About this RNA:
Chemical mapping of a 177-nucleotide RNA with DMS and 2A3. For DMS the reverse transcriptase was MarathonRT. The data come from the RNA Mapping Database (RMDB), library OK1LIB. The 2A3 profile rests on 27,165 reads. For 2A3 the reverse transcriptase was SuperScript II with manganese. Reactivities are given for positions 27 through 126.

RNA sequence: GGGAACGACUCGAGUAGAGUCGAAAACUAUGUACAGACAGUACAGUGGAUAAGGUCUAUUGAUAUCCAACUUGAACAAUGGUACUUGCAGUGGUAUCUAUCAAGAUAGGCAGGCUAUCAUAGAAAGAAGAUGAGUAUUAUUCGUAGUACUCAUCUUAAAAGAAACAACAACAACAAC
Reactivity to DMS in 0.01 (KOAc 150mM, MgCl2 10mM, bicine 150mM(pH8.5), 24C), signal-to-noise 9, nucleotides 027 to 126: c020u010a060u010g010u000a010c010a140g010a130c270a130g010u000a010c010a030g000u010g010g010a140u020a080a100g010g010u000c010u000a000u020u030g010a030u000a010u000c010c010a150a220c010u000u000g000a070a120c300a100a090u030g000g010u000a010c000u000u020g010c220a100g010u020g000g000u000a000u000c000u000a060u010c040a020a020g010a090u030a080g010g010c160a110g000g000c090u000a000u000c010a010u000a010g000a030a080a070g010
Reactivity to 2A3 in 0.01 (KOAc 150mM, MgCl2 10mM, bicine 150mM(pH8.5), 24C), signal-to-noise 9, nucleotides 027 to 126: c010u030a050u100g010u010a010c020a110g200a060c030a030g090u010a010c000a020g020u060g080g030a100u060a160a050g050g030u000c010u010a000u010u120g010a010u000a000u010c000c000a010a030c010u000u010g000a140a020c120a160a240u260g020g000u010a010c000u030u110g160c130a090g050u080g170g000u010a000u000c000u010a060u030c010a000a010g030a130u070a060g100g120c140a050g030g000c010u000a000u010c000a000u010a010g040a020a080a010g110